[RMDB]
RNA sequence: GGGAACGACUCGAGUAGAGUCGAAAACUGGUGAAUGAAUAUCGCGAUGCCCUAGAUCACGGUGAAGUGGUGGUCAAAGAAUGGCGUCCAAUGGCGAUGCACUCUGUGGACUGGUCACCGUAUUUAAUCAUUUAGGCCGAUUCGUCGGCCUAAAUGAAAAAGAAACAACAACAACAAC
Reactivity to 2A3 in 0.01 (KOAc 150mM, MgCl2 10mM, bicine 150mM(pH8.5), 24C), signal-to-noise 1, nucleotides 027 to 126: c030u050g060g030u060g120a070a030u100g050a090a020u180a050u220c010g010c010g030a060u060g030c030c000c000u010a050g000a020u100c060a020c010g110g000u030g040a060a020g030u090g110g060u090g020g000u050c000a020a090a000g060a030a020u240g100g000c020g000u050c020c020a060a210u160g100g000c120g000a010u030g000c010a010c020u040c020u050g110u070g110g060a010c030u050g080g000u000c030a000c020c010g000u020a000u010u080u040a010a050
Reactivity to DMS in 0.01 (KOAc 150mM, MgCl2 10mM, bicine 150mM(pH8.5), 24C), signal-to-noise 2, nucleotides 027 to 126: c090u000g000g040u000g000a070a080u010g020a130a080u010a070u000c020g010c030g000a100u010g010c010c010c010u000a120g010a020u000c120a010c000g040g020u000g010a040a060g000u010g000g020u010g020g000u000c000a070a070a050g000a060a080u010g020g010c010g020u010c010c140a180a130u010g020g020c130g020a020u000g010c020a070c050u000c020u010g010u010g000g000a050c070u000g010g000u000c010a030c030c010g000u010a040u000u010u000a070a180